[RMDB]
About this RNA: An RNA of 177 nucleotides, treated with DMS and read out base by base. Reactivities are given for positions 27 through 126.
RNA sequence: GGGAACGACUCGAGUAGAGUCGAAAAGAUAUGGAUCCGUAGUGGGAGCAUGGGAAAUUCGGAAACGAACACCCAUGAACUACUCCCAUACGGAUCCUAAGUCAAAAGGCCGUCUUCGGACGGCCAAGUUUUCCUACAUCUUCGGAUGUAGGAAAACAAAAGAAACAACAACAACAAC
Reactivity to DMS in 0.01 (KOAc 150mM, MgCl2 10mM, bicine 150mM(pH8.5), 24C), signal-to-noise 1, nucleotides 027 to 126: g010a030u010a300u000g000g000a030u000c000c000g030u000a010g030u030g010g030g000a020g000c010a010u000g000g000g000a020a020a300u010u010c010g020g000a120a070a100c010g010a000a020c250a300c000c000c000a000u000g000a050a010c110u050a300c010u010c010c010c000a030u000a000c010g000g000a000u000c000c000u000a000a100g010u000c050a040a110a040a190g000g030c020c000g010u000c000u010u040c200g000g000a020c010g000g000c000c000a010a000
For DMS the reverse transcriptase was MarathonRT.